[RMDB]
Chemical mapping of a 177-nucleotide RNA with 2A3 and DMS. High DMS reactivity at an A or C suggests that its Watson-Crick edge is free. For 2A3 the reverse transcriptase was SuperScript II with manganese. For DMS, 2,714 sequencing reads were counted. Source: RMDB library TTRDEL, as collected in RNAgym. For 2A3, 7,293 sequencing reads were counted.
RNA sequence: GGGAACGACUCGAGUAGAGUCGAAAAGAUAUGGAGUCACGCCGCACUGACAACAGCUCGGAAACGAGACAUGUCAAACGGUGACUCCUAAGUCAAAGAGUGUAUCUACUUCGGUAGAUACACUCAAGGUAAGACAGUACUUCGGUACUGUCUUACCAAAAGAAACAACAACAACAAC
Reactivity to 2A3 in 0.01 (KOAc 150mM, MgCl2 10mM, bicine 150mM(pH8.5), 24C), signal-to-noise 3, nucleotides 027 to 126: g030a000u070a030u140g000g010a010g010u020c010a030c190g200c160c040g060c080a120c190u040g020a000c000a120a020c050a100g010c000u020c010g050g000a060a060a050c020g010a010g040a070c040a110u080g000u020c050a100a060a080c020g000g000u030g000a000c000u000c010c000u010a080a010g060u040c040a060a080a110g010a010g010u010g000u000a000u000c000u010a010c000u040u080c280g040g000u010a000g000a000u000a000c000a010c000u000c000a000a000
Reactivity to DMS in 0.01 (KOAc 150mM, MgCl2 10mM, bicine 150mM(pH8.5), 24C), signal-to-noise 3, nucleotides 027 to 126: g000a040u000a300u010g000g010a010g010u000c000a070c030g000c090c010g030c110a180c290u010g000a010c000a020a080c300a100g000c020u010c000g010g000a080a110a160c010g000a010g000a020c100a170u010g000u000c000a030a100a110c040g010g000u000g000a000c010u000c000c000u000a020a080g000u000c020a060a120a100g010a010g030u000g000u000a010u000c000u000a010c020u000u000c180g000g020u000a000g000a000u000a000c000a000c000u000c000a010a030